Chemical mapping of a 207-nucleotide RNA with 2A3 and DMS. The RNA was probed in 150 mM KOAc, 10 mM MgCl2 and 150 mM bicine (pH 8.5) at 24 C.
RNA sequence: GGGAACGACUCGAGUAGAGUCGAAAAAAGGUUUGUCAUGAGAUUUUGCUUAGAAUGUAGAGCUUUUAUGAUAAUGUCGGCCAGACUUGGUGGUGAAAUCCUAACACUUUGGGAGGCUGAGGUGGGCAGAUCACUUGAGGUCAGGAAUUCAAGACCAAAAGUGAAUCGAUUUCGAUCGAUUCACUUUAAAAGAAACAACAACAACAAC
Reactivity to 2A3 in 0.01 (KOAc 150mM, MgCl2 10mM, bicine 150mM(pH8.5), 24C), signal-to-noise 2, nucleotides 027 to 156: a000a000g090g000u090u070u040g010u050c070a080u040g090a010g060a190u140u100u110u140g000c010u050u070a030g050a230a120u150g050u060a060g000a020g040c010u090u160u070u120a110u070g060a050u070a150a110u100g040u080c010g020g000c000c000a020g020a070c010u050u040g000g000u020g000g040u010g040a030a050a000u000c000c000u050a130a010c060a000c070u050u030u040g000g000g020a010g000g000c040u020g020a000g010g080u040g000g050g000c000a000g000a050u050c050a030c050u040u060g000a010g020g020u000c000a010g080g020a010a010u140u030c020a040a060g050a060c040c030a050
Reactivity to DMS in 0.01 (KOAc 150mM, MgCl2 10mM, bicine 150mM(pH8.5), 24C), signal-to-noise 1, nucleotides 027 to 156: a060a080g000g020u000u010u010g000u000c020a040u000g020a140g000a110u000u010u020u000g040c010u000u020a110g020a070a120u000g000u010a090g010a040g040c040u000u000u000u000a010u020g040a090u000a080a030u010g010u010c030g030g000c010c010a110g000a070c080u000u000g030g030u000g020g050u000g010a080a030a100u000c020c020u020a110a140c060a030c090u000u000u000g030g000g030a100g000g030c050u010g000a070g030g010u000g020g020g000c060a090g010a050u000c020a070c030u000u000g000a080g040g010u010c020a060g020g010a050a120u010u000c090a040a130g010a100c030c020a010

For DMS the reverse transcriptase was MarathonRT. For 2A3 the reverse transcriptase was SuperScript II with manganese.